[RMDB]
RNA sequence: GGGAACGACUCGAGUAGAGUCGAAAAGCAGGCGCUGUGAGAUUCGAGGGCCGCCCUGAAGCGCGGCCCGGAUGGCCUGGCCCAGGGCCCGGAGGCACGCCAGAUGUAUGCGCGCGGUAAAGGCGACUAAUGCACAACGGUUCGCCGUUGUGCAUUAAAAAGAAACAACAACAACAAC
Reactivity to 2A3 in 0.01 (KOAc 150mM, MgCl2 10mM, bicine 150mM(pH8.5), 24C), signal-to-noise 2, nucleotides 027 to 126: g130c050a000g100g010c030g000c090u000g030u130g140a060g020a160u040u130c030g090a260g000g050g020c000c020g060c030c040c020u290g170a120a030g000c080g000c000g070g000c000c000c010g000g000a000u010g050g000c000c000u040g000g050c000c000c000a000g000g140g000c060c050c070g030g000a040g010g000c030a020c040g000c000c000a010g080a160u120g020u160a070u240g050c090g000c000g000c060g020g000u090a070a090a000g060g020c010g000a000c000
Reactivity to DMS in 0.01 (KOAc 150mM, MgCl2 10mM, bicine 150mM(pH8.5), 24C), signal-to-noise 2, nucleotides 027 to 126: g020c060a030g020g030c060g000c100u050g060u000g030a130g000a120u050u000c030g020a170g020g060g050c000c000g000c010c030c160u030g040a140a130g040c210g020c000g070g040c000c000c000g000g000a020u030g000g000c000c010u000g000g020c010c000c000a210g000g000g000c000c010c060g000g050a160g000g000c000a060c000g020c020c060a150g000a130u020g000u070a070u020g000c060g020c050g000c010g000g000u030a040a080a060g030g000c010g000a030c150